Source information
The record gives the reactivity of an RNA of 207 nucleotides to DMS and 2A3. As a SHAPE reagent, 2A3 marks flexible, mostly unpaired nucleotides at the ribose 2'-OH. For 2A3, 5,550 sequencing reads were counted.
RNA sequence: GGGAACGACUCGAGUAGAGUCGAAAAUUCGGAUUCGUCCGAACGUAACACCUUUGUGCAAUAUGUUGUCAGCCUGGUUUAGCGUCCCAUUGGGACGCACCGUAGGCUUGGAUUUACAUAUGCAGCACUCUGGUCCUAGGUUUGCUUCGGCAAACAACAACCCGUUGUAAUUCGUUACAACGGGUUGAAAAGAAACAACAACAACAAC
Reactivity to DMS in 0.01 (KOAc 150mM, MgCl2 10mM, bicine 150mM(pH8.5), 24C), signal-to-noise 2, nucleotides 027 to 156: u010u010c000g020g000a030u010u010c300g030u020c000c010g020a000a040c080g020u000a140a120c080a090c020c020u000u000u000g000u020g060c030a300a050u000a010u000g010u010u010g010u020c010a060g000c000c000u020g010g000u000u020u010a100g040c000g010u000c000c010c010a300u000u000g030g040g000a050c000g060c030a000c040c030g000u000a030g020g000c010u030u020g050g020a040u010u000u000a020c010a050u000a010u000g020c140a190g020c010a040c010u010c040u000g000g000u010c030c020u000a140g020g030u000u000u010g000c000u000u010c150g060g010c060a090a060a100c050a060a220
Reactivity to 2A3 in 0.01 (KOAc 150mM, MgCl2 10mM, bicine 150mM(pH8.5), 24C), signal-to-noise 2, nucleotides 027 to 156: u020u000c000g010g000a020u020u040c180g090u010c080c000g000a010a010c030g100u140a160a040c030a050c080c000u010u000u010g010u000g000c020a060a010u000a000u000g000u010u000g010u020c000a000g000c000c000u020g000g040u080u130u300a020g010c020g000u020c000c010c060a160u170u300g020g000g000a000c000g000c010a000c010c000g110u190a060g000g000c000u020u080g060g000a020u220u210u180a000c020a000u020a010u050g110c110a030g000c000a020c000u010c020u010g030g030u010c000c040u110a130g070g080u010u000u010g000c010u050u070c220g110g000c000a010a000a010c000a010a020
Annotation: 2A3 adducts were read by reverse transcription with SuperScript II with manganese. Conditions: 150 mM KOAc, 10 mM MgCl2 and 150 mM bicine (pH 8.5), 24 C.